[RMDB]
RNA sequence: GGGAACGACUCGAGUAGAGUCGAAAAUUGUUUAGGAGAUUAUGGCAAUAUUCAAUAACCUUUAAAAAUAUCCAUAAUGGAUUACUUUUUUAGUAGGAUUAGCUAGUGUUGGCAUUUAAUUGUGAUUUUCUAUUAUGUGUCAUGUACCUACCUCCUACCACAUAGUAAGGUUCGCCUUACUAUGUGGAAAAGAAACAACAACAACAAC
Reactivity to 2A3 in 0.01 (KOAc 150mM, MgCl2 10mM, bicine 150mM(pH8.5), 24C), signal-to-noise 4, nucleotides 027 to 156: u070u030g020u050u040u050a030g030g010a060g010a040u040u110a020u180g030g000c030a080a030u050a110u140u090c040a090a100u080a210a220c030c010u090u160u160a060a050a010a010a010u050a010u120c010c010a020u100a220a110u220g030g000a030u080u060a080c050u040u120u020u030u040u120a020g020u020a030g020g020a060u110u040a030g060c140u040a040g050u050g070u230u020g010g000c000a010u000u000u050a030a030u010u090g030u040g200a290u070u130u160u130c030u040a030u010u010a000u030g010u000g010u000c000a010u030g030u070a010c000c000u010a030c000c000u000c000c000u010a030
Reactivity to DMS in 0.01 (KOAc 150mM, MgCl2 10mM, bicine 150mM(pH8.5), 24C), signal-to-noise 1, nucleotides 027 to 156: u000u000g000u000u020u000a110g000g010a100g050a040u000u000a050u020g000g000c020a050a200u000a050u000u010c050a110a200u010a110a100c110c000u010u000u000a030a050a060a040a040u000a040u000c000c000a150u020a080a190u000g000g020a060u010u010a040c040u000u000u000u000u000u000a050g030u010a110g010g010a140u000u000a100g030c040u010a030g040u000g010u010u000g020g020c010a010u000u000u000a020a060u000u000g000u040g010a250u000u010u000u000c050u000a070u000u000a020u000g010u010g030u010c040a020u020g020u030a050c060c040u000a030c030c030u000c010c010u000a120